[RMDB]
RNA sequence: GGGAACGACUCGAGUAGAGUCGAAAAGAUAUGGAUGCCCGGAGGGAGCGUGUCGGAAACGACACGGCGACGAUCUCCGGCAUCCUAAGUCAAAAGCCGAGUUGAGUCUUCGGACUCAACUCGGCAACAAUCCUUUUAACUUCGGUUAAAAGGAUUGAAAAGAAACAACAACAACAAC
Reactivity to 2A3 in 0.01 (KOAc 150mM, MgCl2 10mM, bicine 150mM(pH8.5), 24C), signal-to-noise 1, nucleotides 027 to 126: g030a010u090a040u160g030g000a000u020g070c110c070c080g000g000a000g000g000g000a030g000c000g020u030g010u030c010g040g050a080a040a070c000g020a000c000a000c030g060g060c030g050a110c010g010a000u000c010u030c000c000g000g000c010a000u000c000c000u000a000a010g030u010c030a020a040a160a050g050c010c010g010a020g000u020u030g020a010g000u000c030u050u150c300g050g000a020c000u010c010a030a000c000u000c000g030g050c010a010a010
Reactivity to DMS in 0.01 (KOAc 150mM, MgCl2 10mM, bicine 150mM(pH8.5), 24C), signal-to-noise 2, nucleotides 027 to 126: g000a040u000a300u010g010g000a010u000g010c220c010c040g010g000a020g020g010g010a030g020c000g010u000g000u000c000g010g000a140a080a180c010g010a020c000a000c000g050g050c010g000a080c220g000a030u010c010u000c010c000g000g000c000a000u000c000c000u000a000a070g000u000c020a110a130a120a130g010c000c000g000a000g000u000u000g000a030g000u010c010u000u010c190g010g010a030c010u000c000a010a000c000u000c000g000g000c000a010a020
Chemical mapping of a 177-nucleotide RNA with 2A3 and DMS. High DMS reactivity at an A or C suggests that its Watson-Crick edge is free. The data come from the RNA Mapping Database (RMDB), library TTRDEL. The RNA was probed in 150 mM KOAc, 10 mM MgCl2 and 150 mM bicine (pH 8.5) at 24 C. For DMS, 2,724 sequencing reads were counted.